[RMDB]
RNA sequence: GGGAACGACUCGAGUAGAGUCGAAAAAACAAUGAACUACUCAACAUUUCGGAAGAUGUCACUUGAAUCGACGCAUAGCAGUGUCUCCCAUUCUAUGCAGAAUGAUGUGGAGAAAACUUCCUUCGCAGCCUAUAUAAUCAUUCGUGAUUAUAUAGGCAAAAGAAACAACAACAACAAC
Reactivity to 2A3 in 0.01 (KOAc 150mM, MgCl2 10mM, bicine 150mM(pH8.5), 24C), signal-to-noise 9, nucleotides 027 to 126: a000a010c120a040a070u130g030a040a030c010u030a010c010u030c020a030a060c020a170u100u190u190c070g030g010a020a010g030a070u100g060u100c010a010c060u080u100g070a070a040u050c030g040a020c050g010c020a010u030a020g040c050a010g040u020g050u060c040u050c050c010c000a000u030u000c000u010a050u080g050c030a010g060a070a030u090g030a020u060g040u070g050g030a040g060a030a040a010a030c010u020u020c010c000u070u090c120g050c070a030
Reactivity to DMS in 0.01 (KOAc 150mM, MgCl2 10mM, bicine 150mM(pH8.5), 24C), signal-to-noise 9, nucleotides 027 to 126: a060a050c160a100a070u010g010a080a090c030u000a030c020u010c020a150a140c160a080u000u010u010c140g000g000a060a040g010a070u010g010u000c040a040c040u000u000g010a110a050u000c040g010a150c110g010c030a020u000a030g000c170a050g020u000g010u000c070u010c070c090c010a080u000u000c010u000a050u010g010c070a070g010a070a040u000g010a070u000g010u000g010g010a070g000a060a040a070a080c070u000u000c010c010u000u000c120g010c210a160

The record gives the reactivity of an RNA of 177 nucleotides to 2A3 and DMS. For DMS, 26,623 sequencing reads were counted. 2A3 adducts were read by reverse transcription with SuperScript II with manganese. Reactivities are given for positions 27 through 126. The reactions ran in a buffer of 150 mM KOAc, 10 mM MgCl2 and 150 mM bicine (pH 8.5), at 24 C. It was measured as part of the RMDB library OK2TST.